[RMDB]
RNA sequence: GGGAACGACUCGAGUAGAGUCGAAAAUAAGAUGACUCGACGUCUAAAUUAAGCAGGCGGGGAAAAAGACGUCGAGGAAUCUAAAUAAAUCGCCGCCUGCAAAAGAGCUGUAAAGAAAGCAGCUCAAGCUUCGUAUCACUUUCGAGUGGUGCGAAGCAAAAGAAACAACAACAACAAC
Reactivity to DMS in 0.01 (KOAc 150mM, MgCl2 10mM, bicine 150mM(pH8.5), 24C), signal-to-noise 3, nucleotides 027 to 126: u030a140a140g010a060u010g010a200c000u000c010g000a010c000g020u020c000u010a120a120a180u000u000a080a170g020c010a010g010g010c000g000g010g000g030a030a060a120a140a040g000a000c000g000u000c000g000a030g000g010a050a040u020c050u000a060a090a080u010a060a130a190u000c040g010c010c000g050c000c010u000g030c030a060a030a110a140g010a020g000c000u020g010u000a070a070a110g010a070a070a120g010c010a010g000c000u000c000a100a120
Reactivity to 2A3 in 0.01 (KOAc 150mM, MgCl2 10mM, bicine 150mM(pH8.5), 24C), signal-to-noise 4, nucleotides 027 to 126: u170a020a040g070a060u070g060a040c000u000c010g010a000c000g000u000c000u030a070a190a250u250u090a160a020g000c000a000g000g000c000g010g000g010g030a040a240a030a020a000g010a000c000g000u000c000g000a010g000g000a000a000u010c000u010a010a020a030u060a010a070a020u030c020g020c060c010g010c000c000u000g000c000a000a020a000a020g000a000g000c010u010g020u110a040a250a060g120a090a120a010g050c000a000g000c010u000c000a000a010